Chemical mapping of a 207-nucleotide RNA with 2A3.
[RMDB]
RNA sequence: GGGAACGACUCGAGUAGAGUCGAAAAGCGGAUCUGUGUAUCUCUCAAUAUAUUUGUACUUUCCAUUUGGUAAGUCUUCAAUCCACAUUGAUUUUUUACCUCCUUUUUGCUACAAUAGGGUACAAGAAAAGACUUAUCUUUUCUUUCCAAAUUUUGCCCUCCCGUUAAAGUUCGCUUUAACGGGAGGAAAAGAAACAACAACAACAAC
Reactivity to 2A3 in 0.01 (KOAc 150mM, MgCl2 10mM, bicine 150mM(pH8.5), 24C), signal-to-noise 1, nucleotides 027 to 156: g020c070g000g000a010u030c070u230g050u050g030u080a080u040c050u000c010u000c060a050a070u130a050u150a170u290u180u210g040u050a010c100u070u100u000c030c060a160u180u000u060g010g000u000a000a000g000u000c080u050u190c030a030a030u000c170c000a010c040a150u000u080g000a040u020u000u000u010u010u010a050c000c040u110c090c020u120u080u000u100u250g070c040u080a040c000a010a130u000a110g000g010g010u080a070c040a030a000g020a010a020a000a080g000a040c030u140u050a150u210c020u030u000u000u020c000u000u000u000c000c000a030a190a190u130u170u000u000g000c000
The reactions ran in a buffer of 150 mM KOAc, 10 mM MgCl2 and 150 mM bicine (pH 8.5), at 24 C.